[RMDB]
RNA sequence: GGGAACGACUCGAGUAGAGUCGAAAAUUGACGCUGCUUUUUUUUCGACCUAAAGUAAAGGAAUAAGGGUGAGAGGGGAUCUCUCCCCCCUCUGAUUGGCUGUUAGUAAGCUGGGAAACUUAUCAGUCUAUAUGAGCUAGUUCGCUAGCUCAUAUAGAAAAGAAACAACAACAACAAC
Reactivity to DMS in 0.01 (KOAc 150mM, MgCl2 10mM, bicine 150mM(pH8.5), 24C), signal-to-noise 2, nucleotides 027 to 126: u000u000g000a070c080g010c070u010g000c020u000u000u000u000u000u000u000u000c030g000a080c030c010u000a090a070a090g020u000a070a060a090g000g010a060a040u000a080a090g020g010g010u000g000a020g000a030g010g010g000g010a070u010c120u000c080u000c020c070c000c010c000c010u000c000u000g010a100u000u000g010g020c000u000g010u000u020a120g010u010a060a050g030c020u000g030g000g020a100a050a060c070u000u010a040u010c080a130g010u000
Reactivity to 2A3 in 0.01 (KOAc 150mM, MgCl2 10mM, bicine 150mM(pH8.5), 24C), signal-to-noise 2, nucleotides 027 to 126: u030u030g020a020c040g000c120u050g000c000u110u020u010u030u020u000u030u110c040g020a030c030c010u060a090a040a070g100u060a100a120a080g080g030a090a040u120a080a050g010g000g010u060g040a030g000a010g080g030g070g030a110u090c040u010c010u030c090c000c000c000c000c010u010c010u010g060a090u050u040g030g010c020u010g000u050u020a040g060u040a060a020g000c030u040g000g040g000a080a030a000c010u050u050a070u160c010a030g110u040